The record gives the reactivity of an RNA of 177 nucleotides to 2A3 and DMS. For 2A3 the reverse transcriptase was SuperScript II with manganese. For DMS the reverse transcriptase was MarathonRT.
RNA sequence: GGGAACGACUCGAGUAGAGUCGAAAACGCCAGUGGCAGGUGCUAGGUACGUUAUGUGCUGAGUCGCAAGCUAUAAGCGCACAUGCGAUGCGCGUCGCUGGUCGGGACAGAAUCCGGCAACCUGGCAUCUAGGCAGGGGCUUCGGUCCUUGUCUAGAAAAAGAAACAACAACAACAAC
Reactivity to 2A3 in 0.01 (KOAc 150mM, MgCl2 10mM, bicine 150mM(pH8.5), 24C), signal-to-noise 9, nucleotides 027 to 126: c060g040c010c000a030g040u050g050g020c030a030g040g050u030g020c010u090a110g000g070u120a040c060g080u240u300a120u270g030u010g030c010u050g030a010g070u070c030g000c110a050a010g000c010u040a040u040a250a040g030c020g020c010a010c010a040u170g070c060g090a100u030g000c010g000c010g020u020c020g000c010u010g000g030u020c020g020g010g010a020c020a060g060a050a030u030c010c000g000g000c020a030a050c000c000u000g030g010c000a010
Reactivity to DMS in 0.01 (KOAc 150mM, MgCl2 10mM, bicine 150mM(pH8.5), 24C), signal-to-noise 5, nucleotides 027 to 126: c140g010c010c020a060g010u000g000g010c030a060g000g020u010g010c020u000a300g000g020u030a280c250g000u060u120a250u080g000u000g000c000u000g000a300g000u030c210g000c100a100a070g000c020u010a080u020a060a080g010c030g010c010a020c050a140u020g010c120g020a100u000g010c010g000c020g000u010c060g000c010u000g000g000u010c020g000g000g010a060c090a060g010a080a110u020c000c010g000g000c030a080a060c040c000u000g000g000c020a070